RNA sequence: GGGAACGACUCGAGUAGAGUCGAAAAUGGGGAACGCAGAACAGAGGAGAACACAUGUGUGUUUCAGGCGAUGCUGUGGUUAUGCCGUGGUCAUGCCAUGGUUACGACAUCCUUUCGUACAUGUACGCCGUCAGCGUUUUGCCGUACGCGGUGUUCAGCACCAAGAUUUAUUCGUAAAUCUUGGUGCAAAAGAAACAACAACAACAAC
Reactivity to 2A3 in 0.01 (KOAc 150mM, MgCl2 10mM, bicine 150mM(pH8.5), 24C), signal-to-noise 6, nucleotides 027 to 156: u100g000g010g010g000a050a050c050g000c050a030g020a080a010c030a040g060a030g100g040a060g010a040a010c020a010c040a110u130g080u010g010u010g030u110u110u120c090a060g020g000c010g030a040u030g000c010u010g000u040g020g010u080u090a050u150g010c010c010g020u020g000g040u120c090a060u230g060c010c000a010u010g010g010u050u070a020c040g020a020c020a100u160c050c000u070u120u060c050g000u040a050c020a110u150g020u040a020c070g010c010c010g070u070c020a020g000c000g010u030u040u100u180g030c020c010g000u010a040c070g000c020g000g000u030g000u050u030c020a010
Reactivity to DMS in 0.01 (KOAc 150mM, MgCl2 10mM, bicine 150mM(pH8.5), 24C), signal-to-noise 3, nucleotides 027 to 156: u000g000g020g030g000a070a070c120g020c010a080g000a100a120c060a120g000a160g030g000a140g020a060a040c030a060c020a150u000g010u000g020u010g010u000u010u010c070a120g020g040c070g000a100u010g010c000u020g030u000g030g030u010u000a090u000g020c030c010g050u000g020g040u000c160a090u010g010c060c030a020u010g010g010u010u000a050c030g040a010c060a100u000c060c070u010u000u000c020g030u000a050c070a090u000g030u000a090c060g030c020c010g030u000c030a090g020c030g030u000u000u010u010g030c010c040g020u000a040c060g020c060g010g010u000g030u000u000c040a180
This 207-nucleotide RNA was probed chemically with 2A3 and DMS.
Source: RMDB library OK3TST, as collected in RNAgym.